[RMDB]
RNA sequence: GGGAACGACUCGAGUAGAGUCGAAAAUGUCAGAAGUAAAGAUAAUACUGUCUGUUACAUGGAAGCGAUAAUCGGGAUAUUCACGAGCAACAUCCAUAUUGUCACUGUUUUUUAAUUUGAUUUUGUGCUAGUACAUACGUUUCGACGUAUGUACUAGAAAAGAAACAACAACAACAAC
Reactivity to 2A3 in 0.01 (KOAc 150mM, MgCl2 10mM, bicine 150mM(pH8.5), 24C), signal-to-noise 6, nucleotides 027 to 126: u050g010u010c000a000g010a040a010g010u020a020a120a060g150a190u160a210a080u040a110c020u060g210u250c000u020g080u090u090a020c010a020u050g050g070a040a020g020c010g020a020u020a060a030u050c040g000g010g010a010u010a040u070u090c090a060c180g070a040g050c050a010a030c010a020u010c010c000a000u010a010u070u050g020u040c000a000c050u010g180u080u070u010u020u050u150a200a240u120u070u130g100a110u050u060u060u120g080u060g060
Reactivity to DMS in 0.01 (KOAc 150mM, MgCl2 10mM, bicine 150mM(pH8.5), 24C), signal-to-noise 9, nucleotides 027 to 126: u010g000u000c010a010g000a130a030g010u000a020a100a150g010a160u010a130a110u000a020c020u000g010u010c010u000g000u000u010a030c030a020u000g000g010a160a060g010c020g010a020u000a020a030u000c070g010g000g000a040u000a050u000u000c040a180c180g010a110g010c110a030a030c060a030u000c010c020a030u000a040u000u000g010u000c020a040c040u000g000u000u010u010u010u020u000a060a110u010u010u010g000a110u000u000u000u000g020u010g010